[RMDB]
RNA sequence: GGGAACGACUCGAGUAGAGUCGAAAAACUUUGGCGGACGCUGCUAGGCGGGUGCGCACUGCUGUCUGGCCCGGCGCCGCGCUAGGGCGCACGUUUCGCUCUGCGGAGGGUAACCGGGCUGAAAUAACUUGUAGUAUGAGUUCGCUCAUACUACAAGAAAAGAAACAACAACAACAAC
Reactivity to DMS in 0.01 (KOAc 150mM, MgCl2 10mM, bicine 150mM(pH8.5), 24C), signal-to-noise 6, nucleotides 027 to 126: a090c060u000u000u000g010g010c030g010g000a080c050g000c040u000g020c100u010a100g010g010c020g010g010g020u000g000c040g020c040a080c050u000g010c040u000g000u000c070u000g000g000c000c020c010g010g010c250g010c000c000g010c020g010c050u020a030g010g000g010c010g020c120a080c210g000u010u000u000c010g000c010u000c010u000g010c010g010g010a130g010g000g010u000a080a110c010c000g000g000g010c010u000g000a030a060a070u010a060a150
Reactivity to 2A3 in 0.01 (KOAc 150mM, MgCl2 10mM, bicine 150mM(pH8.5), 24C), signal-to-noise 5, nucleotides 027 to 126: a000c030u120u090u090g050g000c030g000g030a010c040g030c150u070g010c060u060a070g100g020c030g040g030g060u100g050c030g000c030a040c050u070g010c010u050g040u110c060u070g010g010c000c000c000g020g010c030g000c000c010g020c000g000c060u120a020g000g010g010c010g010c020a110c130g080u060u230u180c000g000c010u000c010u010g000c000g030g070a250g130g000g030u030a090a080c010c000g030g000g000c010u010g010a010a020a000u110a040a060